[RMDB]
RNA sequence: GGGAACGACUCGAGUAGAGUCGAAAAGACCGGGUGCUUCAGCUACUGGCACUAACGUGGGCCGGAACAAUUGGUGCUGCUGUUGUCUUCGGCUAGUCCCGAUCUGACUGGUCUCACGGGCCCAAGAAAUGACCUCAUAGUUCGCUAUGAGGUCAUUAAAAGAAACAACAACAACAAC
Reactivity to DMS in 0.01 (KOAc 150mM, MgCl2 10mM, bicine 150mM(pH8.5), 24C), signal-to-noise 5, nucleotides 027 to 126: g000a190c010c000g000g010g010u000g020c020u010u010c230a150g020c040u010a180c060u000g000g010c010a040c010u010a050a040c050g000u000g000g000g010c020c000g010g010a060a120c270a100a050u000u000g000g010u000g010c020u000g010c010u000g010u010u010g000u000c240u010u000c020g010g000c000u010a020g010u000c170c010c000g010a020u000c060u010g010a300c030u000g000g010u000c000u000c030a040c030g000g000g010c010c000c000a080a090g000a100
Reactivity to 2A3 in 0.01 (KOAc 150mM, MgCl2 10mM, bicine 150mM(pH8.5), 24C), signal-to-noise 1, nucleotides 027 to 126: g030a020c000c000g060g000g000u030g000c000u140u170c050a050g000c020u110a050c040u180g000g000c010a010c050u010a050a030c050g000u010g010g020g030c020c000g020g010a070a030c000a010a030u020u020g030g020u050g020c010u000g000c010u040g060u280u100g130u190c170u140u100c050g010g040c060u060a000g030u030c000c000c020g000a030u020c030u040g020a010c010u020g000g000u060c060u030c050a000c000g000g000g030c010c020c010a020a040g130a070